This 177-nucleotide RNA was probed chemically with DMS and 2A3.
DMS adducts were read by reverse transcription with MarathonRT.
The RNA was probed in 150 mM KOAc, 10 mM MgCl2 and 150 mM bicine (pH 8.5) at 24 C.
2A3 adducts were read by reverse transcription with SuperScript II with manganese.
RNA sequence: GGGAACGACUCGAGUAGAGUCGAAAACCACCUUACUACUGACGAAGACACCCAUUCCAGUGGACCACUGUGACCCAGGAGGCAUUCAGCCAUCAUGAUGUGGCCUUUACCUCCACUCCUGUCUUGUUAUCACAAACCUGUUCGCAGGUUUGUGAUAAAAAGAAACAACAACAACAAC
Reactivity to DMS in 0.01 (KOAc 150mM, MgCl2 10mM, bicine 150mM(pH8.5), 24C), signal-to-noise 1, nucleotides 027 to 126: c000c000a050c090c030u030u090a000c000u000a030c000u000g010a080c030g000a140a070g000a060c030a020c000c070c030a130u020u010c000c080a080g110u020g000g060a150c120c000a000c020u000g000u000g000a170c000c020c160a080g030g040a040g030g000c090a090u000u040c190a120g000c000c050a060u000c070a140u060g080a090u050g050u000g000g010c050c050u010u050u000a050c000c000u000c010c070a160c090u000c050c000u000g000u050c010u040u030g000u000
Reactivity to 2A3 in 0.01 (KOAc 150mM, MgCl2 10mM, bicine 150mM(pH8.5), 24C), signal-to-noise 4, nucleotides 027 to 126: c000c000a030c010c020u060u070a060c050u040a030c020u020g020a060c070g090a040a030g030a030c010a020c030c010c010a020u050u050c020c000a020g070u070g000g020a050c010c010a030c040u060g070u100g090a040c000c000c030a030g000g030a010g040g000c020a040u070u060c050a030g000c010c010a040u070c050a110u210g140a170u220g090u020g010g000c000c010u040u040u030a010c020c000u000c000c010a020c040u040c030c020u060g020u030c040u040u040g010u020